[RMDB]
RNA sequence: GGGAACGACUCGAGUAGAGUCGAAAAGUAUGGAUGCCACCGUGACGGCUCAAUCACACAAGUGCCAACGAUAACAAGGCGCUCGCUAUUGCUGCGUAACUGACGGCCUGACGGUCUGACGUUACAAAAAACGAAAAGUGGUUCGCCACUUUUCGAAUCUCAUUUAGUAGUUCGCUACUAAAUGAGAAAAAGAAACAACAACAACAAC
Reactivity to 2A3 in 0.01 (KOAc 150mM, MgCl2 10mM, bicine 150mM(pH8.5), 24C), signal-to-noise 6, nucleotides 027 to 156: g080u080a070u140g040g050a060u080g030c030c010a050c030c040g030u050g050a050c070g010g030c030u040c070a050a100u110c030a050c010a030c010a190a030g010u010g010c000c020a070a020c100g100a120u110a220a060c060a050a100g010g000c010g000c020u070c030g030c040u090a100u200u250g040c060u090g020c040g020u010a020a010c010u010g020a010c020g000g010c000c010u140g080a070c110g000g010u000c010u020g010a000c010g010u010u010a010c010a010a060a000a010a000a000c000g000a000a000a000a000g000u000g020g010u020u060c100g030c060c000a000c000u010u000u000u000c000g000a020a030
Reactivity to DMS in 0.01 (KOAc 150mM, MgCl2 10mM, bicine 150mM(pH8.5), 24C), signal-to-noise 3, nucleotides 027 to 156: g000u000a050u010g040g000a120u000g010c040c040a080c020c080g000u000g020a100c060g000g040c020u000c060a080a130u000c080a130c070a060c080a030a030g060u000g010c010c010a110a110c070g040a170u000a050a160c060a090a140g010g000c010g040c020u000c020g000c040u000a080u000u000g010c020u000g000c020g030u000a040a030c030u000g010a300c300g000g000c020c010u000g030a090c300g020g040u000c000u010g000a300c270g020u020u030a030c020a000a000a040a040a070a170c010g000a020a000a030a020g030u000g040g020u000u000c260g060c020c000a020c000u000u000u000u000c000g010a040a050
Chemical mapping of a 207-nucleotide RNA with 2A3 and DMS.
For DMS, 4,204 sequencing reads were counted.
The 2A3 profile rests on 6,299 reads.